[RMDB]
RNA sequence: GGGAACGACUCGAGUAGAGUCGAAAAGAUAUGGAUCGUAGGGACAUGUCGAGUCGGAAACGAUUAACGACAACAGCCCUCGAUCCUAAGUCAAAUCUACGGCCAUUGUUCGCAAUGGCCGUAGAAAUCACCACUACUUCUUCGGAAGUAGUGGUGAAAAAGAAACAACAACAACAAC
Reactivity to DMS in 0.01 (KOAc 150mM, MgCl2 10mM, bicine 150mM(pH8.5), 24C), signal-to-noise 1, nucleotides 027 to 126: g010a060u000a300u010g000g000a000u000c000g010u020a030g000g000g010a030c070a100u010g000u000c000g020a050g000u000c010g000g010a060a080a140c010g000a010u000u000a060a210c030g020a020c030a020a070c300a170g010c000c000c010u000c010g020a000u000c000c000u000a000a080g010u010c060a070a110a130u000c000u000a010c000g000g020c000c000a000u000u000g000u010u030c170g010c000a010a010u000g010g010c000c000g010u000a000g000a010a080a070
Reactivity to 2A3 in 0.01 (KOAc 150mM, MgCl2 10mM, bicine 150mM(pH8.5), 24C), signal-to-noise 1, nucleotides 027 to 126: g010a020u000a000u100g030g030a030u040c020g060u180a020g010g010g000a020c100a230u080g020u000c020g000a000g030u010c040g000g050a050a060a020c000g040a000u000u180a300a080c000g010a000c000a100a080c070a180g040c000c000c000u020c000g000a000u020c010c000u010a010a000g000u000c000a000a020a230u030c030u010a020c030g010g000c000c000a000u000u080g080u070u120c300g070c150a020a000u000g000g000c100c020g000u000a000g000a000a000a000
Chemical mapping of a 177-nucleotide RNA with DMS and 2A3. The DMS profile rests on 1,085 reads. For 2A3 the reverse transcriptase was SuperScript II with manganese. The 2A3 profile rests on 1,476 reads. The data come from the RNA Mapping Database (RMDB), library TTRDEL. Values cover nucleotides 27 to 126. The RNA was probed in 150 mM KOAc, 10 mM MgCl2 and 150 mM bicine (pH 8.5) at 24 C.